[RMDB]
RNA sequence: GGGAACGACUCGAGUAGAGUCGAAAAGCACAUGCAGUGCACCUCGGAGGCUCGGCUCCGUCAUCAACGGAACAGUUAAUAUAACUGCAAAGAACGAAAAUUCUUACGCUUUAGCUGCUUAAUAACCAGCUAGCGUGAUCCUUCCGACUUCGCUCAACUAACUUAGCUACUUCGGUAGCUAAGUUAGAAAAGAAACAACAACAACAAC
Reactivity to 2A3 in 0.01 (KOAc 150mM, MgCl2 10mM, bicine 150mM(pH8.5), 24C), signal-to-noise 6, nucleotides 027 to 156: g010c010a030c020a030u290g160c160a060g020u000g000c010a050c000c000u000c010g000g000a010g010g000c120u120c300g030g060c050u000c000c010g060u030c000a000u000c000a000a000c000g000g010a010a020c010a000g010u020u040a150a070u160a250u060a170a060c020u060g040c100a090a070a030g030a070a030c060g070a030a010a030a070u140u040c040u090u070a020c000g000c000u120u130u120a000g000c010u010g000c010u060u040a030a020u040a050a030c020c000a000g000c000u000a000g000c000g000u000g010a030u080c020c060u120u040c050c020g050a080c110u060u070c100g010c050u050c030a010a110
Reactivity to DMS in 0.01 (KOAc 150mM, MgCl2 10mM, bicine 150mM(pH8.5), 24C), signal-to-noise 2, nucleotides 027 to 156: g020c010a000c020a100u010g070c120a230g010u030g030c080a300c040c010u000c030g020g030a080g010g000c080u010c030g000g020c000u000c000c010g020u000c060a050u020c300a120a030c000g010g030a140a080c030a000g010u000u000a120a200u000a140u000a030a050c030u000g010c020a010a080a010g010a030a090c090g000a070a030a060a240u000u000c060u000u010a050c010g000c030u000u010u000a010g020c010u000g000c050u010u010a130a160u010a210a160c270c030a050g010c050u000a030g010c030g030u000g000a030u000c070c050u010u010c000c040g000a090c040u000u000c020g030c000u000c000a060a220